The record gives the reactivity of an RNA of 207 nucleotides to DMS and 2A3.
Reactivities are rounded to 0.1 and cut off at 0 and 3.
2A3 adducts were read by reverse transcription with SuperScript II with manganese.
DMS adducts were read by reverse transcription with MarathonRT.
For DMS, 2,114 sequencing reads were counted.
The reactions ran in a buffer of 150 mM KOAc, 10 mM MgCl2 and 150 mM bicine (pH 8.5), at 24 C.
[RMDB]
RNA sequence: GGGAACGACUCGAGUAGAGUCGAAAAGAGGGCCAAGUCUAUCAGGAAAGGAUUAUGAGCCAAAAAAUGUUGCCAUAGCAAAUUACUGGCACUAUCCUGGAGGGCAUCCCGGAAUUGCUUAAAGAGGUUGCCAAUCUUGUUCCUCUGCGGGUUGAGGACCUUAUGUACGGUUCGCCGUACAUAAGGUAAAAGAAACAACAACAACAAC
Reactivity to DMS in 0.01 (KOAc 150mM, MgCl2 10mM, bicine 150mM(pH8.5), 24C), signal-to-noise 2, nucleotides 027 to 156: g040a120g020g020g030c050c030a050a130g070u000c050u000a160u010c050a100g040g030a130a080a120g010g020a070u000u010a180u050g010a180g040c030c010a010a020a130a070a100a050u010g010u000u000g040c110c140a100u000a140g020c030a040a090a110u000u000a080c150u000g010g040c010a130c040u000a110u000c010c010u010g000g010a200g020g020g010c050a120u000c010c000c000g000g010a070a090u010u000g030c080u000u000a050a100a270g010a130g000g000u000u000g030c040c060a100a060u000c020u000u000g000u060u000c000c000u000c020u010g010c060g020g020g000u000u010g040a190g000g010
Reactivity to 2A3 in 0.01 (KOAc 150mM, MgCl2 10mM, bicine 150mM(pH8.5), 24C), signal-to-noise 3, nucleotides 027 to 156: g000a010g010g000g000c030c000a000a010g010u040c050u060a280u090c060a000g010g040a010a060a030g040g010a060u120u140a190u300g090a080g010c000c000a050a020a030a020a000a030u220g030u090u080g010c040c010a160u140a030g070c030a070a070a070u160u060a130c100u060g000g010c000a010c000u010a040u000c000c000u000g030g010a110g010g030g020c010a010u030c000c000c000g000g030a070a140u160u130g030c070u090u160a060a140a030g120a040g000g000u020u030g000c020c010a050a190u110c020u010u030g010u000u010c000c000u000c030u020g050c090g030g090g000u040u080g000a050g050g030